[RMDB]
RNA sequence: GGGAACGACUCGAGUAGAGUCGAAAAAGAUAUGGACCUUAGACAUGCUCCGAGAUGAGGCUCGUUGAUCAGCUUCGGAAACGAAGCUGGGAGAGCCUGAGGAGCAACAGCUAAGGUCCUAAGUCAAUCAUGUACUAAGGUUCGCCUUAGUACAUGAAAAAGAAACAACAACAACAAC
Reactivity to 2A3 in 0.01 (KOAc 150mM, MgCl2 10mM, bicine 150mM(pH8.5), 24C), signal-to-noise 5, nucleotides 027 to 126: a000g070a050u080a060u130g000g000a010c010c000u020u010a020g030a100c050a130u090g000c000u010c000c030g090a110g100a300u300g210a120g020g000c000u000c010g230u300u030g000a020u020c010a000g000c010u010u010c010g020g010a000a070a010c020g000a000a000g000c000u000g000g000g000a040g000a000g020c010c000u000g000a010g000g010a000g010c000a010a010c010a010g010c000u000a000a010g000g000u000c000c000u000a010a000g010u010c010a010a120
Reactivity to DMS in 0.01 (KOAc 150mM, MgCl2 10mM, bicine 150mM(pH8.5), 24C), signal-to-noise 8, nucleotides 027 to 126: a090g010a050u000a300u010g010g000a010c010c000u000u000a010g000a070c100a250u000g000c000u000c000c000g010a300g020a230u010g010a070g010g010c000u000c010g020u000u020g000a070u010c010a000g010c000u000u000c000g010g000a100a090a220c000g000a010a000g000c000u010g000g000g000a010g000a020g010c000c000u000g000a130g010g000a010g000c010a010a020c290a160g020c010u000a000a010g010g000u000c000c010u000a010a080g010u000c030a160a220